An RNA of 207 nucleotides, treated with 2A3 and DMS and read out base by base. For DMS, 4,613 sequencing reads were counted. Values cover nucleotides 27 to 156. 2A3 adducts were read by reverse transcription with SuperScript II with manganese.
[RMDB]
RNA sequence: GGGAACGACUCGAGUAGAGUCGAAAAGUUGCAGGUUCGCCUGCAACAAAAAGCGUACUACCUUGACAUGUUCAGCUGCUACCCACCGUUUCCCAAAUAGGAAACGAGGCAGGAACAACAGCAAGGUAUCGCAAAAAUCUCAUGUUCGCAUGAGAAAUCAUCACUAGUAGUUCGCUACUAGUGAUGAAAAAGAAACAACAACAACAAC
Reactivity to 2A3 in 0.01 (KOAc 150mM, MgCl2 10mM, bicine 150mM(pH8.5), 24C), signal-to-noise 4, nucleotides 027 to 156: g000u000u000g010c000a010g000g060u050u160c170g180c060c000u010g000c000a000a000c000a000a020a010a000a000g050c040g030u100a070c030u010a010c050c000u030u020g020a150c050a190u030g040u000u010c030a150g110c050u010g000c010u050a120c030c050c040a030c010c030g000u000u000u000c030c010c010a220a300a100u260a090g000g000a000a000a000c000g000a020g020g000c000a000g020g020a010a010c010a010a010c010a020g090c010a000a000g000g000u010a020u120c000g010c000a040a010a000a020a100u030c010u000c000a000u010g090u040u110c300g020c100a000u000g010a010g000a040a070a020
Reactivity to DMS in 0.01 (KOAc 150mM, MgCl2 10mM, bicine 150mM(pH8.5), 24C), signal-to-noise 2, nucleotides 027 to 156: g000u000u000g010c000a010g000g010u000u000c300g030c030c000u000g000c000a030a000c030a020a060a040a070a180g010c030g030u010a100c130u010a040c010c020u020u010g000a070c100a300u000g020u000u000c070a170g010c010u000g010c010u000a040c000c000c020a300c150c010g000u000u000u000c000c000c000a040a120a200u010a090g000g000a000a010a010c010g010a040g000g030c000a020g020g000a050a100c020a070a040c050a080g030c030a020a020g050g020u010a030u000c010g000c020a040a070a110a050a100u000c000u010c010a000u000g000u000u000c270g090c010a050u000g000a020g000a030a110a150

For DMS the reverse transcriptase was MarathonRT. It was measured as part of the RMDB library RNAMAK.